Source: RMDB library OK2TRN, as collected in RNAgym. An RNA of 177 nucleotides, treated with 2A3 and DMS and read out base by base. Reactivities are given for positions 27 through 126. The RNA was probed in 150 mM KOAc, 10 mM MgCl2 and 150 mM bicine (pH 8.5) at 24 C. 2A3 adducts were read by reverse transcription with SuperScript II with manganese.

[RMDB]
RNA sequence: GGGAACGACUCGAGUAGAGUCGAAAAGCCUAUUUAAGGUACAAACAGCACUUCAUACAAUAUCUCAUGAGGUAUUAAUAGUGAUUCACAGGAAGAAUUUCACGCUGUGAGUCUUUGCUAACAUAUCGUGAAGGAUAAUAUUCGUAUUAUCCUUCACAAAAGAAACAACAACAACAAC
Reactivity to 2A3 in 0.01 (KOAc 150mM, MgCl2 10mM, bicine 150mM(pH8.5), 24C), signal-to-noise 7, nucleotides 027 to 126: g000c000c000u030a130u050u210u060a150a030g020g000u100a060c060a040a200a030c040a050g040c020a010c020u070u060c060a050u080a180c060a080a110u020a050u100c030u040c080a120u160g120a030g040g000u020a020u070u070a080a160u070a060g070u050g030a010u010u000c010a010c010a010g070g060a130a100g100a180a170u120u210u190c070a060c110g120c020u010g000u000g010a000g000u000c000u060u100u040g000c000u020a090a040c020a100u110a060u170c070
Reactivity to DMS in 0.01 (KOAc 150mM, MgCl2 10mM, bicine 150mM(pH8.5), 24C), signal-to-noise 9, nucleotides 027 to 126: g000c010c000u000a080u010u010u010a100a070g010g010u000a060c110a100a120a110c170a040g020c030a100c120u000u010c100a090u000a080c140a050a050u000a030u000c040u000c100a120u010g000a040g020g010u000a030u000u000a070a120u000a050g010u000g000a020u000u000c010a020c040a020g000g000a110a090g010a090a120u000u010u010c110a060c220g020c010u000g010u000g010a080g010u000c010u000u010u000g010c040u000a060a070c170a080u000a060u000c130